[RMDB]
Structure probing data (2A3 and DMS) for a 177-nucleotide construct. The data come from the RNA Mapping Database (RMDB), library OK1LIB. The 2A3 profile rests on 14,108 reads. For 2A3 the reverse transcriptase was SuperScript II with manganese. DMS adducts were read by reverse transcription with MarathonRT.
RNA sequence: GGGAACGACUCGAGUAGAGUCGAAAAGAAAGCGACGAUUCGAUCGUAGUCGCAAUGAUCGGGUGAAGGUCCGAAAAGGUGCCAUGGUGACGGCACGGUAACCAUGAAAGAAAGGACCGAAAAGAAACCCUUAUGAUUACUUCGGUAAUCAUAAGGGAAAAGAAACAACAACAACAAC
Reactivity to 2A3 in 0.01 (KOAc 150mM, MgCl2 10mM, bicine 150mM(pH8.5), 24C), signal-to-noise 7, nucleotides 027 to 126: g100a030a120a010g050c030g030a040c020g040a090u090u100c040g050a100u100c040g020u060a040g040u050c010g010c030a000a040u100g010a030u060c040g020g020g000u080g090a140a020g020g000u000c000c020g060a040a040a030a090g120g040u080g050c040c010a020u050g030g010u060g040a040c050g020g130c120a010c070g000g020u030a020a010c000c010a010u060g080a080a080a070g080a040a080a030g030g000a000c000c020g020a020a020a000a010g050a010a050a010
Reactivity to DMS in 0.01 (KOAc 150mM, MgCl2 10mM, bicine 150mM(pH8.5), 24C), signal-to-noise 8, nucleotides 027 to 126: g010a090a090a100g020c060g010a050c050g000a100u020u020c060g000a080u000c050g020u010a150g010u000c020g000c060a080a060u020g000a050u000c030g000g010g000u010g020a110a110g010g010u000c000c010g030a070a060a100a100g010g010u010g000c100c010a040u010g000g010u000g010a080c100g020g020c080a040c080g000g000u000a100a040c020c020a020u000g010a110a110a130g000a060a120a190g000g000a020c000c000g020a030a030a060a090g010a110a100a120